This 177-nucleotide RNA was probed chemically with DMS and 2A3.
For 2A3 the reverse transcriptase was SuperScript II with manganese.
Conditions: 150 mM KOAc, 10 mM MgCl2 and 150 mM bicine (pH 8.5), 24 C.
For DMS the reverse transcriptase was MarathonRT.
RNA sequence: GGGAACGACUCGAGUAGAGUCGAAAAUCACAAAGCGGAUUUAGCUCGGUUGGGAGAGGUCCAGACCGAAGAUCUGGUUGUCCUGUGGGCGACCCACAGAAUUCGCACCAUAAACAACGGGAGAUUCCCCUGGAUACGGAUUCGUCCGUAUCCAGGGAAAAGAAACAACAACAACAAC
Reactivity to DMS in 0.01 (KOAc 150mM, MgCl2 10mM, bicine 150mM(pH8.5), 24C), signal-to-noise 1, nucleotides 027 to 126: u030c170a090c130a140a010a070g020c070g000g000a020u000u030u000a140g060c150u000c070g000g000u000u020g020g000g020a100g000a030g000g000u000c020c000a090g000a050c050c030g000a030a020g000a100u020c100u020g000g020u010u010g000u030c130c020u000g010u060g050g000g020c180g000a100c130c000c110a140c110a130g000a030a010u000u000c000g020c000a180c100c090a130u030a020a070a000c300a090a000c090g000g020g000a060g000a110u040u000c000
Reactivity to 2A3 in 0.01 (KOAc 150mM, MgCl2 10mM, bicine 150mM(pH8.5), 24C), signal-to-noise 4, nucleotides 027 to 126: u130c020a020c090a070a190a020g030c060g020g030a050u080u030u040a070g050c040u000c010g090g020u050u070g020g040g020a250g020a090g070g130u020c000c040a020g080a060c000c020g090a070a000g060a060u050c040u040g040g000u040u030g020u040c030c000u120g000u060g070g010g000c050g050a050c010c020c000a120c020a060g050a020a010u070u030c000g000c030a090c020c000a010u160a090a170a020c040a080a040c040g110g000g000a070g000a060u070u050c000